RNA sequence: GGGAACGACUCGAGUAGAGUCGAAAACAUGGAGUGCUCGGGCCUCGGAGCCUCCUACAACAACAACAACUUGCGAGGCCCUUAAUGGGCGAAAGCCCUAGGAGUCGUGGCGGCGUGCACGCUCCGUAUGACUUAAUGUAUUACACGCCGGGUACAACAUACCCAUGCGGUUCGCCGCAUGGGUAUGAAAAGAAACAACAACAACAAC
Reactivity to 2A3 in 0.01 (KOAc 150mM, MgCl2 10mM, bicine 150mM(pH8.5), 24C), signal-to-noise 2, nucleotides 027 to 156: c060a030u080g000g010a010g030u150g000c010u020c020g000g000g000c000c000u000c000g000g030a030g000c040c000u010c090c010u070a030c000a070a000c000a080a000c000a000a030c020a010a080c000u130u300g040c000g000a000g000g000c020c000c000u010u040a040a000u000g020g000g000c000g060a140a030a030g030c030c000c000u000a030g000g000a030g060u270c030g010u030g030g030c000g020g000c000g040u030g000c000a000c000g000c000u070c000c000g010u060a080u230g020a000c000u030u090a060a010u150g150u170a110u080u160a020c000a000c020g010c000c000g000g010g010u140a050c050a090a000